[RMDB]
RNA sequence: GGGAACGACUCGAGUAGAGUCGAAAAAGUUGGGUAUUUAUUGUAUCGUCCAACUGAAAAUACAACGUUUGAGCAACGUGCUGCAACGAGUGCAUUGAAAAAGCGCAUGAUUGACGGAGGAUUUACGUCCCCUACGAGGCUUCGGCCUCGUAGGGGAAAAAGAAACAACAACAACAAC
Reactivity to 2A3 in 0.01 (KOAc 150mM, MgCl2 10mM, bicine 150mM(pH8.5), 24C), signal-to-noise 1, nucleotides 027 to 126: a000g160u170u000g000g000g040u100a300u190u010u000a300u270u090g300u110a020u100c020g000u020c050c000a020a000c000u000g000a000a000a000a000u300a020c150a070a040c020g000u000u160u110g110a000g290c000a000a300c110g090u040g140c020u090g000c000a000a240c150g040a030g000u070g260c010a150u200u070g140a000a000a000a000a000g010c100g000c100a080u150g000a050u020u000g000a000c000g020g020a000g070g000a160u000u020u170a210c000g000
Reactivity to DMS in 0.01 (KOAc 150mM, MgCl2 10mM, bicine 150mM(pH8.5), 24C), signal-to-noise 1, nucleotides 027 to 126: a000g000u000u020g030g000g220u030a050u020u060u030a120u000u020g020u010a090u060c080g000u000c050c000a000a000c000u070g000a030a020a000a020u000a150c060a070a200c000g000u020u000u040g000a070g000c080a110a070c140g000u150g050c010u000g000c040a040a140c250g070a050g020u000g050c050a010u000u070g000a000a060a000a000a010g000c060g000c050a160u020g000a070u000u010g010a260c180g000g000a140g000g000a140u000u000u000a010c090g000

The record gives the reactivity of an RNA of 177 nucleotides to 2A3 and DMS. For DMS, 1,087 sequencing reads were counted. Values cover nucleotides 27 to 126. Conditions: 150 mM KOAc, 10 mM MgCl2 and 150 mM bicine (pH 8.5), 24 C.